[RMDB]
RNA sequence: GGGAACGACUCGAGUAGAGUCGAAAAGGCUUUGGAUGUAGGUUUUGAUUAGUGGGUGAAAGUUCAGGUCGAUUGUUUUAGUGGUUUGGUUUGUGACCUGGUUGCUUAAACAGAGGUGAUCCAUUGCCUAAAUUUAUAAUUUCGAUUAUAAAUUUAGAAAAGAAACAACAACAACAAC
Reactivity to DMS in 0.01 (KOAc 150mM, MgCl2 10mM, bicine 150mM(pH8.5), 24C), signal-to-noise 7, nucleotides 027 to 126: g000g010c010u000u000u000g000g010a020u010g020u020a140g010g000u010u010u020u010g010a100u010u010a080g020u010g010g000g010u000g010a090a080a090g010u020u020c020a020g000g010u000c020g010a060u010u010g010u000u010u010u010a070g020u010g010g010u000u010u000g010g010u010u010u020g010u030g010a020c000c000u000g000g010u010u010g000c030u000u010a040a040a070c050a060g000a110g000g010u010g000a040u000c000c000a010u000u000g000c030
Reactivity to 2A3 in 0.01 (KOAc 150mM, MgCl2 10mM, bicine 150mM(pH8.5), 24C), signal-to-noise 5, nucleotides 027 to 126: g040g010c010u060u040u040g020g030a030u060g050u200a100g040g030u090u100u120u120g070a080u070u120a070g080u090g030g040g000u040g080a100a030a010g040u060u090c010a000g000g040u040c020g060a080u030u110g050u020u070u030u030a030g010u030g070g010u040u040u060g060g040u030u090u140g110u080g060a010c000c000u000g000g030u040u090g000c010u030u080a030a040a000c010a010g060a030g080g070u080g020a010u000c000c000a020u020u020g010c000
The record gives the reactivity of an RNA of 177 nucleotides to DMS and 2A3. For DMS, 39,032 sequencing reads were counted. It was measured as part of the RMDB library OK1LIB. Conditions: 150 mM KOAc, 10 mM MgCl2 and 150 mM bicine (pH 8.5), 24 C.